[RMDB]
RNA sequence: GGGAACGACUCGAGUAGAGUCGAAAAGUUGUAAACUUCGGUUUACAACAAAAAAGAGAGAAAAGCUCUCCAUCGCUCUUCCAAGCGACAACGGAACCAAAAAAACCCAGCUCUUCGGAGCUGGGAACCAUAACACUUUCUUCGGAAAGUGUUAUGGAAAAGAAACAACAACAACAAC
Reactivity to 2A3 in 0.01 (KOAc 150mM, MgCl2 10mM, bicine 150mM(pH8.5), 24C), signal-to-noise 1, nucleotides 027 to 126: g020u000u000g010u030a000a010a010c010u010u110c220g010g000u020u010u020a000c000a000a000c000a000a020a000a000a040a000g170a020g010a000g010a000a300a050a070g100c000u010c010u000c010c030a070u030c010g000c000u000c000u130u000c010c000a000a010g010c000g030a020c000a080a000c080g070g060a030a010c020c060a020a070a000a020a050a040a130c000c020c000a000g000c000u000c010u070u110c300g100g000a010g000c000u010g010g010g000a010a000
Reactivity to DMS in 0.01 (KOAc 150mM, MgCl2 10mM, bicine 150mM(pH8.5), 24C), signal-to-noise 2, nucleotides 027 to 126: g000u000u000g000u010a000a030a000c000u020u010c220g010g020u000u000u000a000c000a000a000c010a000a030a080a120a080a070g000a010g000a050g010a300a150a210a250g010c030u000c000u000c000c210a160u020c000g000c030u000c030u000u010c140c050a180a010g000c030g020a060c070a010a120c050g000g000a080a100c090c050a020a000a110a110a150a080a150c000c000c000a030g020c000u000c000u020u000c150g020g000a010g010c080u000g010g010g010a000a030

The record gives the reactivity of an RNA of 177 nucleotides to 2A3 and DMS. The 2A3 profile rests on 1,425 reads. For DMS, 780 sequencing reads were counted. The RNA was probed in 150 mM KOAc, 10 mM MgCl2 and 150 mM bicine (pH 8.5) at 24 C.